Annotation:
Chemical mapping of a 177-nucleotide RNA with DMS and 2A3. The RNA was probed in 150 mM KOAc, 10 mM MgCl2 and 150 mM bicine (pH 8.5) at 24 C. The 2A3 profile rests on 1,615 reads.
[RMDB]
RNA sequence: GGGAACGACUCGAGUAGAGUCGAAAAGAAAAGAAAGAAAGAUGAUGUCUCCUUACCGUUAUCAAUGGAGGCAAACUCGCACAUGGCGAAGGUGGGAACGAUGACGGUAAUGCCACCAGAAAAGAAACCGUGAUUAGUCAUUCGUGACUAAUCACGGAAAAGAAACAACAACAACAAC
Reactivity to DMS in 0.01 (KOAc 150mM, MgCl2 10mM, bicine 150mM(pH8.5), 24C), signal-to-noise 2, nucleotides 027 to 126: g000a070a100a090a080g000a020a030a070g000a050a110a010g050a160u030g000a300u020g000u020c000u000c030c010u000u090a080c000c000g000u000u000a050u030c130a100a060u000g000g000a000g000g000c080a000a040a020c090u020c030g000c000a140c150a030u020g000g000c010g000a020a020g000g030u010g000g000g030a070a030c140g000a130u000g000a050c000g000g000u010a070a090u050g000c010c000a020c020c010a110g000a150a100a010a060g030a090a020a090
Reactivity to 2A3 in 0.01 (KOAc 150mM, MgCl2 10mM, bicine 150mM(pH8.5), 24C), signal-to-noise 3, nucleotides 027 to 126: g050a000a040a010a000g090a000a080a000g110a000a060a000g130a060u250g000a000u060g020u020c020u000c020c020u030u090a060c020c010g040u090u040a050u060c030a090a170u170g070g000a010g010g040c000a000a000a050c060u000c000g040c000a060c040a220u140g180g000c000g090a130a060g030g000u040g000g060g010a000a120c000g000a000u070g050a000c000g000g000u000a000a000u060g070c020c000a000c000c010a010g120a030a170a000a010g090a120a020a020